[RMDB]
RNA sequence: GGGAACGACUCGAGUAGAGUCGAAAAAUCGAGUUCGGGGUUUUCCAGCAUGGCUUUCUUCGCACUCAUCGAGAACAAACCUGCCUGCUGCGUCCAGUAGUUCUGCAGCCGGAAAUACUUCACGAAGAUAUACUGCCUCAUUCGUGAGGCAGUAUAUAAAAGAAACAACAACAACAAC
Reactivity to DMS in 0.01 (KOAc 150mM, MgCl2 10mM, bicine 150mM(pH8.5), 24C), signal-to-noise 3, nucleotides 027 to 126: a070u020c040g020a080g020u010u000c090g000g000g000g010u000u000u010u000c050c030a180g010c120a040u030g000g010c090u000u010u000c040u020u000c050g000c140a010c070u020c090a100u030c030g020a070g000a060a040c130a020a080a110c040c030u010g000c050c040u000g000c050u000g010c060g010u010c050c060a130g010u080a090g010u000u000c030u010g040c010a030g000c020c050g040g000a060a030a070u010a050c110u010u030c060a070c040g010a060a060g000
Reactivity to 2A3 in 0.01 (KOAc 150mM, MgCl2 10mM, bicine 150mM(pH8.5), 24C), signal-to-noise 5, nucleotides 027 to 126: a000u100c050g020a030g040u060u040c020g000g010g010g030u030u020u090u000c050c000a020g090c100a120u150g040g000c010u010u020u020c020u010u010c020g000c020a020c020u000c000a080u090c070g060a070g020a110a050c030a070a100a020c010c010u020g070c000c010u010g000c000u010g000c020g020u000c010c010a110g090u150a030g000u200u060c060u180g000c020a000g000c000c030g010g050a010a080a040u210a040c040u070u140c030a020c120g050a080a010g090
An RNA of 177 nucleotides, treated with DMS and 2A3 and read out base by base.
Values cover nucleotides 27 to 126.
It was measured as part of the RMDB library OK1LIB.
Conditions: 150 mM KOAc, 10 mM MgCl2 and 150 mM bicine (pH 8.5), 24 C.